[RMDB]
RNA sequence: GGGAACGACUCGAGUAGAGUCGAAAACGCAUAGUUACCUCUUUUCAUUUUGUAACCAUCUGUCACAUGAUUACUGAUGUCCAUUGUAACCUGCCUGUUUAAGCAGAUUCACCCAGAGUUCCGCAGGCAUUACUGCAUACGACUCUGAGAUAUUAGACUCUCCUGAAGGUUUCGACCUUCAGGAGAGAAAAGAAACAACAACAACAAC
Reactivity to 2A3 in 0.01 (KOAc 150mM, MgCl2 10mM, bicine 150mM(pH8.5), 24C), signal-to-noise 1, nucleotides 027 to 156: c030g040c030a170u020a150g010u060u070a030c030c010u130c050u140u150u140u050c100a100u050u280u300u250g000u000a020a000c000c000a010u020c010u130g130u070c030a040c090a150u080g010a050u030u030a010c000u000g020a010u010g030u000c050c030a110u010u270g030u020a050a010c000c000u010g050c000c020u070g020u120u060u030a030a040g030c030a020g020a080u100u020c000a130c090c000c000a000g000a000g060u040u030c000c030g000c000a000g060g040c010a070u030u300a030c050u030g000c010a000u030a100c030g000a000c010u000c000u010g080a120g000a020u050a130u090u100a130g040a090

Record summary
The record gives the reactivity of an RNA of 207 nucleotides to 2A3. Source: RMDB library OK3TST, as collected in RNAgym. For 2A3 the reverse transcriptase was SuperScript II with manganese. For 2A3, 394 sequencing reads were counted.